[RMDB]
RNA sequence: GGGAACGACUCGAGUAGAGUCGAAAAGUGUGUGUUUGUGUGUGUGUGUAUAUGCUUGUCAGUGCAUGCACGUGUAUGUCUGGGAGUACAAAUGGGUGCGACUGGUUGUAGGGAACUAGCUAUGUGCGUUUAGGCAUCUUUUCGAAGAUGCCUAAACAAAAGAAACAACAACAACAAC
Reactivity to DMS in 0.01 (KOAc 150mM, MgCl2 10mM, bicine 150mM(pH8.5), 24C), signal-to-noise 5, nucleotides 027 to 126: g010u000g030u000g010u010g000u010u000u010g030u020g010u010g030u010g010u000g010u000g000u000a050u020a100u020g010c040u010u010g020u020c040a020g010u000g010c030a040u000g000c040a030c120g010u030g000u000a040u000g000u010c030u000g000g000g000a090g010u020a070c130a040a080a110u020g010g000g020u000g010c060g010a090c080u000g020g000u010u000g010u000a040g000g020g010a050a050c060u010a040g010c070u000a090u040g020u020g020c210
Reactivity to 2A3 in 0.01 (KOAc 150mM, MgCl2 10mM, bicine 150mM(pH8.5), 24C), signal-to-noise 5, nucleotides 027 to 126: g100u070g000u010g020u010g040u040u060u010g050u030g010u010g000u000g000u000g000u000g030u010a040u030a040u190g050c040u090u080g090u210c010a040g020u030g040c000a020u010g030c010a020c090g040u060g020u010a010u050g030u010c030u020g030g000g010a040g030u050a040c040a030a140a060u110g020g020g010u030g060c040g050a030c030u030g010g020u040u020g020u030a020g000g020g000a010a020c010u010a010g020c020u020a070u150g080u060g020c050